Source: RMDB library 15KREP, as collected in RNAgym. This 177-nucleotide RNA was probed chemically with DMS and 2A3. DMS (dimethyl sulfate) methylates the pairing face of unpaired adenines and cytosines. High 2A3 reactivity points to a flexible backbone, as in loops and unpaired stretches.
RNA sequence: GGGAACGACUCGAGUAGAGUCGAAAAUCUGCAUCAUACUUUUGCAAGAUAGGUAAGGAACAGAAGUGUUGCAUGUGCAAUAGACGCGCUGCAGCGUACUCUUCACCUCUGCAAUCUUAUGCCUGCUGUUUGAAAGGAAGUUCGCUUCCUUUCAAACAAAAGAAACAACAACAACAAC
Reactivity to DMS in 0.01 (KOAc 150mM, MgCl2 10mM, bicine 150mM(pH8.5), 24C), signal-to-noise 1, nucleotides 027 to 126: u000c030u000g000c060a080u000c030a050u000a010c070u000u000u000u000g010c070a030a070g030a170u010a050g010g020u000a070a100g010g030a020a180c090a040g010a100a080g030u010g010u000u020g000c010a000u010g010u000g000c130a120a150u010a090g010a150c140g000c010g020c070u010g000c050a060g030c010g000u000a040c090u000c030u000u000c050a010c010c010u000c040u010g030c010a000a030u010c010u000u000a040u000g000c170c150u000g000c070u000
Reactivity to 2A3 in 0.01 (KOAc 150mM, MgCl2 10mM, bicine 150mM(pH8.5), 24C), signal-to-noise 3, nucleotides 027 to 126: u000c000u020g010c010a030u040c000a010u040a060c010u000u030u000u000g010c040a140a110g030a150u140a050g040g010u030a040a050g030g040a020a100c070a100g110a190a050g110u040g020u090u000g000c020a050u250g000u000g000c010a040a060u080a220g160a110c100g020c000g020c050u050g010c020a000g000c020g000u040a060c010u000c040u000u030c030a010c000c010u000c010u010g000c010a000a030u000c010u020u020a010u010g000c050c040u030g000c010u010

The RNA was probed in 150 mM KOAc, 10 mM MgCl2 and 150 mM bicine (pH 8.5) at 24 C. DMS adducts were read by reverse transcription with MarathonRT. For 2A3 the reverse transcriptase was SuperScript II with manganese.